[RMDB]
Structure probing data (2A3 and DMS) for a 207-nucleotide construct. It was measured as part of the RMDB library M2RFPK. Reactivities are given for positions 27 through 156. For 2A3 the reverse transcriptase was SuperScript II with manganese. For DMS, 2,384 sequencing reads were counted.
RNA sequence: GGGAACGACUCGAGUAGAGUCGAAAAGUUAGGCGAGGCUCCUAUACUAACACAGGUUGCUGAUCUGACGACGUCGAGAGACGCCCAAGAUUAGGACAGGAUAUAUCGAACCAAGGUAUAUCCCCAUAAAACUCGGAACACUUCGGUGUUCCGAGAACUGUUAAUUGUUCUUCGGAACAAUUAACAGAAAAGAAACAACAACAACAAC
Reactivity to 2A3 in 0.01 (KOAc 150mM, MgCl2 10mM, bicine 150mM(pH8.5), 24C), signal-to-noise 3, nucleotides 027 to 156: g020u040u040a020g030g020c150g090a080g030g060c070u070c070c010u100a090u110a120c090u100a150a050c100a010c040a150g070g030u180u170g030c000u030g020a060u000c010u020g000a000c020g000a010c010g000u010c010g010a000g010a020g000a090c000g010c000c010c030a000a010g020a100u090u180a010g040g020a020c050a080g000g010a010u000a000u000a000u010c000g020a100a100c120c080a140a040g000g000u000a000u000a000u020c010c000c000c000a060u200a050a150a030a030c000u000c000g010g000a000a000c000a000c010u060u110c230g080g000u000g000u000u000c000c000g000a000g000a000a010
Reactivity to DMS in 0.01 (KOAc 150mM, MgCl2 10mM, bicine 150mM(pH8.5), 24C), signal-to-noise 2, nucleotides 027 to 156: g050u000u000a020g020g060c030g000a200g030g030c010u020c020c020u020a070u010a200c050u000a090a080c060a120c110a130g000g000u000u000g000c000u000g030a030u020c000u000g000a100c050g010a010c010g040u010c010g010a300g010a300g010a020c020g000c000c050c100a300a050g000a050u000u000a090g000g010a170c080a060g000g000a050u000a020u000a000u010c000g010a100a290c160c190a200a140g030g010u010a020u000a010u000c000c000c010c010a080u000a050a030a100a200c010u000c000g020g000a020a030c000a010c000u000u010c300g050g020u010g020u000u000c000c000g010a000g000a010a050